[RMDB]
RNA sequence: GGGAACGACUCGAGUAGAGUCGAAAAAAAGUAUGCCCUUUACUUACACAGGUAAUCCGCUAUGCCUUUAGGAAGUUAUUGGGAAAGGUAGCAUAGAGAAAAAGAUGACCAAGUAUGAAUAGCCCUCAAGUCACCUAAGGUUCGCCUUAGGUGACUUAAAAGAAACAACAACAACAAC
Reactivity to DMS in 0.01 (KOAc 150mM, MgCl2 10mM, bicine 150mM(pH8.5), 24C), signal-to-noise 1, nucleotides 027 to 126: a020a030a030g050u010a050u040g010c020c000c000u000u000u000a060c050u000u000a090c150a150c250a020g010g000u020a040a060u000c040c040g010c060u000a110u000g010c000c020u000u010u000a120g000g010a080a040g010u010u010a040u000u000g010g010g020a050a050a030g000g020u000a080g020c050a050u000a050g010a100g000a080a060a060a060a050g020a020u010g020a020c050c040a050a120g040u010a020u010g010a110a080u000a160g000c020c010c030u000c150
The data come from the RNA Mapping Database (RMDB), library OK2TRN. Chemical mapping of a 177-nucleotide RNA with DMS. The DMS profile rests on 881 reads. Conditions: 150 mM KOAc, 10 mM MgCl2 and 150 mM bicine (pH 8.5), 24 C.